[RMDB]
Chemical mapping of a 177-nucleotide RNA with 2A3 and DMS. For 2A3, 2,473 sequencing reads were counted. Reactivities are rounded to 0.1 and cut off at 0 and 3.

RNA sequence: GGGAACGACUCGAGUAGAGUCGAAAACGUGCCAUGUUCGCAUGGCACGAAAUAAAGGAAACAGGAAGGCAUCGGCGCACGAUGUAACAAGCGCAAAAUAAAAAACAUUUCACUUCGGUGAAAUGAAUCCAUGACUUAAGUUCGCUUAAGUCAUGGAAAAAGAAACAACAACAACAAC
Reactivity to 2A3 in 0.01 (KOAc 150mM, MgCl2 10mM, bicine 150mM(pH8.5), 24C), signal-to-noise 2, nucleotides 027 to 126: c010g010u010g000c000c000a020u010g050u030u070c240g000c130a000u000g000g010c000a000c000g010a000a000a010u070a000a090a000g090g010a070a020a000c030a030g100g010a070a050g040g010c020a010u050c040g020g000c000g010c040a080c140g010a000u030g020u100a020a030c070a110a000g050c030g000c020a050a050a040a010u200a050a080a020a010a010a030c000a000u000u010u010c020a010c020u020u070c240g140g000u010g020a000a000a020u000g020a010a040
Reactivity to DMS in 0.01 (KOAc 150mM, MgCl2 10mM, bicine 150mM(pH8.5), 24C), signal-to-noise 3, nucleotides 027 to 126: c000g000u000g010c000c000a010u000g020u010u030c260g040c010a000u000g030g000c010a000c010g020a020a070a030u000a080a110a110g010g020a040a060a070c070a030g020g010a110a040g000g020c010a010u000c070g010g010c020g010c060a070c030g010a040u000g010u000a040a090c110a070a110g010c080g020c060a100a080a070a080u020a010a070a050a100a080a110c000a000u000u000u010c000a000c000u000u010c170g010g000u000g000a000a000a000u000g010a110a080